[RMDB]
RNA sequence: GGGAACGACUCGAGUAGAGUCGAAAAGAAGAUGUGUUCGCACAUCUUCAAAAGCUACGACUAGGACCGGCGAGACAAAGGACCGAUAGCUAAUCGCGACGAAAACAGGCCUCUUCGGAGGCCUGAACAUUUGACGUGAGUUCGCUCACGUCAAAUGAAAAGAAACAACAACAACAAC
Reactivity to DMS in 0.01 (KOAc 150mM, MgCl2 10mM, bicine 150mM(pH8.5), 24C), signal-to-noise 2, nucleotides 027 to 126: g000a000a000g030a000u000g010u000g000u000u000c190g000c000a000c000a000u000c000u010u010c000a070a020a080a130g050c020u010a030c060g040a060c020u000a030g000g000a080c050c050g000g000c050g050a090g020a050c100a040a060a150g000g000a150c090c000g000a070u000a090g030c030u000a050a100u000c040g000c070g000a120c080g000a090a040a080a210c010a000g020g030c000c000u010c000u010u050c170g000g000a000g010g020c000c000u000g000a010a060
Source: RMDB library M2PK50, as collected in RNAgym. The record gives the reactivity of an RNA of 177 nucleotides to DMS. Reactivities are given for positions 27 through 126. The reactions ran in a buffer of 150 mM KOAc, 10 mM MgCl2 and 150 mM bicine (pH 8.5), at 24 C.